Structure probing data (2A3 and DMS) for a 177-nucleotide construct. The data come from the RNA Mapping Database (RMDB), library RFM100.
RNA sequence: GGGAACGACUCGAGUAGAGUCGAAAAGCUAUGAGUGCAUGUAUUUACAUGUAUUGCAAAUCCACAUAUUCGUUGUGUUUGCACCACAACAAUAUGAGUGGGACACUAUAAUUUAUAAUAAUAGUGCUUAUGGUGGUGAUUUCGAUCACCACCAUAAAAAAGAAACAACAACAACAAC
Reactivity to 2A3 in 0.01 (KOAc 150mM, MgCl2 10mM, bicine 150mM(pH8.5), 24C), signal-to-noise 5, nucleotides 027 to 126: g070c030u080a040u190g090a010g050u020g010c000a000u000g000u070a200u110u230u210a010c000a010u000g020u010a010u030u100g090c040a040a010a090u050c000c000a010c000a010u020a000u040u020c140g000u010u000g000u000g050u030u080u140g060c080a020c040c000a000c000a020a000c000a010a010u010a030u010g030a040g080u060g010g050g040a030c010a000c030u020a000u010a150a170u080u250u180a190u080a200a050u110a060a020u040a020g010u000g020c020
Reactivity to DMS in 0.01 (KOAc 150mM, MgCl2 10mM, bicine 150mM(pH8.5), 24C), signal-to-noise 3, nucleotides 027 to 126: g010c090u010a050u020g010a020g030u000g000c000a000u010g010u000a140u030u040u050a010c010a000u020g000u000a020u000u000g010c080a080a080a080u030c000c010a090c000a030u000a000u010u010c260g010u000u010g020u000g020u020u020u090g030c190a120c300c000a000c010a000a020c000a010a010u000a000u010g010a070g060u000g000g000g000a300c010a000c000u000a010u010a020a020u020u000u040a150u060a140a060u020a110a020u000a000g010u000g010c110